[RMDB]
RNA sequence: GGGAACGACUCGAGUAGAGUCGAAAACCUACUCAAUACGUCCUCGUCGUACAGAACGGUAACAUGUUUUCCGAACAUCCGGGCUUGGGUAUACGAGUAUACACCUUACCCAACCCUCGCCAACGGGAGUGCAUCCACGAGUUCGCUCGUGGAUGAAACCAGACGGUUAAUUCGUUAACCGUCUGGUAAAAGAAACAACAACAACAAC
Reactivity to 2A3 in 0.01 (KOAc 150mM, MgCl2 10mM, bicine 150mM(pH8.5), 24C), signal-to-noise 3, nucleotides 027 to 156: c010c000u030a060c020u040c050a090a100u060a180c020g030u010c020c020u030c010g030u010c030g010u070a080c040a120g080a100a010c020g040g050u090a070a030c050a150u110g020u050u030u090u050c010c020g030a050a030c020a100u060c050c030g060g000g000c060u000u010g050g000g000u030a060u030a110c090g020a040g090u050a030u070a080c110a080c030c030u050u040a020c010c010c000a010a030c020c030c010u000c010g050c010c030a080a070c020g010g000g020a030g040u070g050c000a000u000c000c000a000c000g010a010g000u080u070c160g050c060u010c000g000u000g000g010a000u000g000a000a000
Reactivity to DMS in 0.01 (KOAc 150mM, MgCl2 10mM, bicine 150mM(pH8.5), 24C), signal-to-noise 2, nucleotides 027 to 156: c050c030u000a040c080u010c050a070a110u000a020c030g040u000c010c010u000c020g030u000c120g050u020a170c040a070g000a120a080c010g030g010u010a040a140c040a070u010g010u090u000u000u000c000c000g000a150a100c030a080u000c020c010g010g030g010c040u000u000g000g020g040u000a030u010a070c080g020a070g010u010a070u010a060c110a160c110c070u010u000a050c010c000c000a100a060c010c010c000u000c020g040c050c010a090a260c080g020g010g000a220g010u000g020c020a040u000c000c000a030c030g010a050g000u000u020c300g060c020u000c020g070u000g000g010a000u000g000a030a090